Notes: The data come from the RNA Mapping Database (RMDB), library OK2TST. The record gives the reactivity of an RNA of 177 nucleotides to 2A3 and DMS.

RNA sequence: GGGAACGACUCGAGUAGAGUCGAAAACAAUUAGUGUGGAACAUACCUACGAUACUUAGAAUAAAACCUGUUUGAUGAGAAGGACAUGUUCAAAUAGUAAAACCAAUACACAAAGGCAUUGAUUUACCACUUGAGUUUGUUUCGACAAACUCAAGUGAAAAGAAACAACAACAACAAC
Reactivity to 2A3 in 0.01 (KOAc 150mM, MgCl2 10mM, bicine 150mM(pH8.5), 24C), signal-to-noise 2, nucleotides 027 to 126: c020a000a000u130u090a070g060u040g000u060g170g000a030a030c010a030u100a040c030c010u040a040c030g030a050u070a070c060u080u090a040g100a120a030u140a080a070a060a040c030c030u030g090u150u040u060g120a150u040g030a020g000a040a060g000g000a110c020a050u030g000u030u010c010a060a000a080u080a040g040u040a000a000a040a060c020c010a000a050u120a040c090a000c000a040a100a010g080g000c000a030u010u060g000a020u120u030u020a060c030
Reactivity to DMS in 0.01 (KOAc 150mM, MgCl2 10mM, bicine 150mM(pH8.5), 24C), signal-to-noise 2, nucleotides 027 to 126: c070a080a120u020u010a070g000u000g030u000g000g000a060a030c060a030u000a050c050c040u010a150c080g010a070u000a040c060u000u010a120g010a090a080u000a080a080a100a130c190c050u000g000u000u010u010g020a140u010g010a170g010a120a050g020g050a100c130a030u000g000u000u000c010a100a050a010u010a060g000u000a010a000a040a030c050c030a040a020u000a020c040a090c160a100a110a120g000g000c040a050u010u000g000a070u000u000u000a110c130